Chemical mapping of a 177-nucleotide RNA with 2A3 and DMS. Conditions: 150 mM KOAc, 10 mM MgCl2 and 150 mM bicine (pH 8.5), 24 C. Source: RMDB library OK1LIB, as collected in RNAgym. 2A3 adducts were read by reverse transcription with SuperScript II with manganese. The 2A3 profile rests on 2,430 reads. For DMS, 3,893 sequencing reads were counted.
[RMDB]
RNA sequence: GGGAACGACUCGAGUAGAGUCGAAAACAGACUCGAGCGAAAGCUCGGCGAAAGCCGCGUACAUGUGAACGUCGGCUUGUGUACAGUCGACAGUUACUCUUCGGAGUAACAAUAGAAACAACAACAACGGGAUACGAUUAUUCGUAAUCGUAUCCCGAAAAGAAACAACAACAACAAC
Reactivity to 2A3 in 0.01 (KOAc 150mM, MgCl2 10mM, bicine 150mM(pH8.5), 24C), signal-to-noise 4, nucleotides 027 to 126: c060a020g040a010c000u010c020g000a000g030c020g080a070a010a000g010c010u010c020g000g000c020g000a120a020a000g010c000c010g000c040g020u070a080c040a230u300g080u150g200a180a010c020g080u150c050g090g000c000u020u020g040u030g020u050a080c070a060g010u000c010g030a010c010a030g000u010u000a000c000u000c000u020u100c230g110g000a000g000u010a000a000c010a000a000u130a030g070a040a110a020c070a020a010c000a010a020c000a040a020
Reactivity to DMS in 0.01 (KOAc 150mM, MgCl2 10mM, bicine 150mM(pH8.5), 24C), signal-to-noise 4, nucleotides 027 to 126: c140a100g000a060c030u040c000g010a000g010c010g000a110a120a120g010c010u000c000g040g000c130g000a070a040a000g000c000c010g020c000g010u000a110c070a270u000g030u070g000a070a000c030g000u020c020g030g020c010u000u020g000u070g050u010a090c300a040g020u020c000g010a090c280a150g040u000u010a000c000u000c020u010u050c130g030g010a030g010u000a000a020c000a110a050u070a120g020a190a110a090c100a050a060c140a050a070c180a070a070